Description
An RNA of 177 nucleotides, treated with 2A3 and DMS and read out base by base. Values are in units of 0.01, from 0 to 300, in steps of 10. It was measured as part of the RMDB library TTRDEL. 2A3 adducts were read by reverse transcription with SuperScript II with manganese. Values cover nucleotides 27 to 126.
RNA sequence: GGGAACGACUCGAGUAGAGUCGAAAAGAUAUGGACAUGUGUGGACAUGGCUAGUCGGAAACGACAGGGCCAACAGCCACCAUGUCCUAAGUCAAAAUCAAGUAUAAUGUUCGCAUUAUACUUGAAACUAUCAUAAUUGGUUCGCCAAUUAUGAUAGAAAAGAAACAACAACAACAAC
Reactivity to 2A3 in 0.01 (KOAc 150mM, MgCl2 10mM, bicine 150mM(pH8.5), 24C), signal-to-noise 7, nucleotides 027 to 126: g020a010u060a030u100g010g000a000c000a010u050g270u090g010u010g100g030a080c100a290u070g010g000c010u010a020g000u000c010g000g020a060a030a020c010g020a010c030a050g300g000g000c000c010a050a020c060a030g040c000c000a000c000c000a000u000g000u000c000c000u000a000a000g000u000c020a010a000a000a290u030c000a000a000g000u010a010u000a010a010u020g050u060u080c240g010c130a000u000u010a000u000a000c000u000u000g000a000a000a000
Reactivity to DMS in 0.01 (KOAc 150mM, MgCl2 10mM, bicine 150mM(pH8.5), 24C), signal-to-noise 9, nucleotides 027 to 126: g010a040u000a300u010g000g000a000c010a010u000g000u010g030u000g000g000a080c130a180u000g010g010c010u000a100g010u000c000g000g000a090a050a140c000g010a010c000a110g010g000g010c000c000a030a070c290a160g000c010c000a010c000c000a000u000g000u000c000c000u000a010a050g010u000c030a090a090a110a140u000c000a010a010g000u000a000u000a010a010u000g000u000u010c240g020c000a010u000u000a000u000a010c000u000u000g000a010a060a170